[RMDB]
RNA sequence: GGGAACGACUCGAGUAGAGUCGAAAAUUCGCUACGUGUAUGGUCGCUUUAGGAGCUCAUAUGAGUGCUUUCUGGAUAGUGUGUGCUAACUCUUGGAUGCAAACGCCUUCAGGUUAUGAAAUGGCCAGUGUUAACGUACGUUCGCGUACGUUAACACAAAAGAAACAACAACAACAAC
Reactivity to DMS in 0.01 (KOAc 150mM, MgCl2 10mM, bicine 150mM(pH8.5), 24C), signal-to-noise 3, nucleotides 027 to 126: u010u000c030g010c050u000a030c130g020u010g010u000a050u010g010g020u000c050g020c050u010u000u000a070g010g000a080g020c020u000c020a160u000a070u010g000a070g040u000g000c070u020u000u000c040u000g010g000a070u000a070g020u010g010u000g010u000g010c030u000a070a100c080u000c070u020u000g030g020a120u000g000c100a030a070a060c160g010c020c040u000u000c060a080g020g020u000u000a070u000g020a030a060a130u010g020g000c010c060a080
Reactivity to 2A3 in 0.01 (KOAc 150mM, MgCl2 10mM, bicine 150mM(pH8.5), 24C), signal-to-noise 2, nucleotides 027 to 126: u050u010c050g000c080u050a040c100g080u090g020u090a080u100g020g040u080c010g010c030u080u040u120a140g010g060a030g050c000u040c040a130u170a130u300g060a050g030u060g030c000u000u050u060c020u010g030g040a050u050a070g050u050g010u020g000u040g070c010u030a040a090c020u060c020u120u110g040g000a020u070g000c040a160a050a080c050g030c010c000u030u040c010a050g080g000u080u110a150u150g050a090a090a020u110g020g000c050c000a080
Chemical mapping of a 177-nucleotide RNA with DMS and 2A3. The data come from the RNA Mapping Database (RMDB), library OK2TRN.